Conditions: 150 mM KOAc, 10 mM MgCl2 and 150 mM bicine (pH 8.5), 24 C. Structure probing data (2A3 and DMS) for a 177-nucleotide construct. It was measured as part of the RMDB library OK1LIB.

RNA sequence: GGGAACGACUCGAGUAGAGUCGAAAAACAAUCAUGAAAAAGACGCUGACGGCAAUUGUGUUAAGCGCGGUUCUGGCUCCACCUGUGGCUCUGGCUAUCGGUGGGGGCGGUGUCAUUGUGGAAGAUCGUGAAAAGGAUGGUUCGCCAUCCUUUUCACAAAAGAAACAACAACAACAAC
Reactivity to 2A3 in 0.01 (KOAc 150mM, MgCl2 10mM, bicine 150mM(pH8.5), 24C), signal-to-noise 2, nucleotides 027 to 126: a000c100a070a050u190c010a170u180g150a080a020a020a050a020g110a030c030g020c000u040g060a040c040g040g070c130a160a260u180u200g050u000g010u120u110a100a030g070c030g000c000g030g000u100u040c030u120g000g060c000u000c000c000a000c010c010u040g000u000g040g000c020u020c070u270g260g030c000u010a020u080c020g030g000u030g000g000g000g000g000c020g000g020u050g010u000c040a030u020u100g010u120g040g030a090a000g020a090u170c150
Reactivity to DMS in 0.01 (KOAc 150mM, MgCl2 10mM, bicine 150mM(pH8.5), 24C), signal-to-noise 1, nucleotides 027 to 126: a080c140a150a030u090c100a030u010g010a000a120a090a090a210g000a080c010g030c000u010g040a010c060g000g010c130a140a140u010u000g020u030g010u050u050a010a030g010c040g030c000g010g050u000u030c070u000g030g000c050u030c000c030a060c030c010u000g030u010g030g010c010u000c230u050g000g000c020u000a000u000c300g050g000u000g020g000g000g020g040c060g000g010u020g000u000c100a210u010u000g000u050g000g000a160a120g000a130u030c060